[RMDB]
RNA sequence: GGGAACGACUCGAGUAGAGUCGAAAACACAUUCCUGAAUCCUUCGCCUGGGCCAAUCUGCUAGACAGCUGAGCGGAAAUCUGUUGCUUGUCCCAGGACAAGUACAGAUUGUGGAAGUGAUAAUCCAACUCACCAUCAGGUUCGCCUGGUGGUGAGUAAAAGAAACAACAACAACAAC
Reactivity to 2A3 in 0.01 (KOAc 150mM, MgCl2 10mM, bicine 150mM(pH8.5), 24C), signal-to-noise 8, nucleotides 027 to 126: c050a000c010a170u030u030c000c010u010g030a030a070u050c000c010u050u060c030g010c020c010u050g020g030g000c010c010a020a080u020c010u030g010c010u050a050g050a170c060a030g020c030u060g060a010g030c030g040g000a040a010a010u000c000u020g020u040u140g050c000u010u000g000u000c000c010c030a050g020g020a000c000a000a000g000u000a000c000a000g030a010u030u060g050u070g030g020a020a040g030u030g070a070u090a120a050u040c020c020a020
Reactivity to DMS in 0.01 (KOAc 150mM, MgCl2 10mM, bicine 150mM(pH8.5), 24C), signal-to-noise 6, nucleotides 027 to 126: c160a080c210a220u010u010c020c000u000g000a100a060u010c030c020u010u000c060g000c020c030u020g010g010g000c020c050a050a110u010c020u000g010c040u010a090g010a140c130a070g030c060u000g000a080g000c130g000g010a090a030a010u000c000u000g000u020u040g030c000u000u000g000u000c010c020c120a170g010g020a010c010a000a010g010u000a000c000a010g000a010u000u000g010u010g000g000a050a050g000u020g000a070u020a090a070u010c030c060a100
The record gives the reactivity of an RNA of 177 nucleotides to 2A3 and DMS. Conditions: 150 mM KOAc, 10 mM MgCl2 and 150 mM bicine (pH 8.5), 24 C. The DMS profile rests on 20,658 reads.